[RMDB]
RNA sequence: GGGAACGACUCGAGUAGAGUCGAAAAAAAAGAUAUGGAUCGUGAACUACGAUGAACGUAGCCGUUGAAACUGCUUCGGAAACGAAGCAGUGGAGGCUAUUAGUAAUCGCACGAUCCUAAGUCAAAACGAUAAAGCAAUCUUCGGAUUGCUUUAUCGAAAAGAAACAACAACAACAAC
Reactivity to DMS in 0.01 (KOAc 150mM, MgCl2 10mM, bicine 150mM(pH8.5), 24C), signal-to-noise 2, nucleotides 027 to 126: a050a060a020a040g010a020u000a210u000g000g000a010u000c010g000u000g030a100a040c140u010a300c020g010a020u010g030a160a190c080g000u000a000g030c020c000g060u020u020g000a120a230a040c000u010g000c020u000u000c000g000g000a040a040a080c000g000a010a010g000c000a010g000u000g000g010a020g000g000c000u010a000u000u000a080g000u000a080a000u000c010g010c000a010c000g020a000u000c000c000u000a010a040g010u000c010a080a060a120a220
An RNA of 177 nucleotides, treated with DMS and read out base by base. The RNA was probed in 150 mM KOAc, 10 mM MgCl2 and 150 mM bicine (pH 8.5) at 24 C. The data come from the RNA Mapping Database (RMDB), library TTRDES. DMS adducts were read by reverse transcription with MarathonRT. Reactivities are given for positions 27 through 126.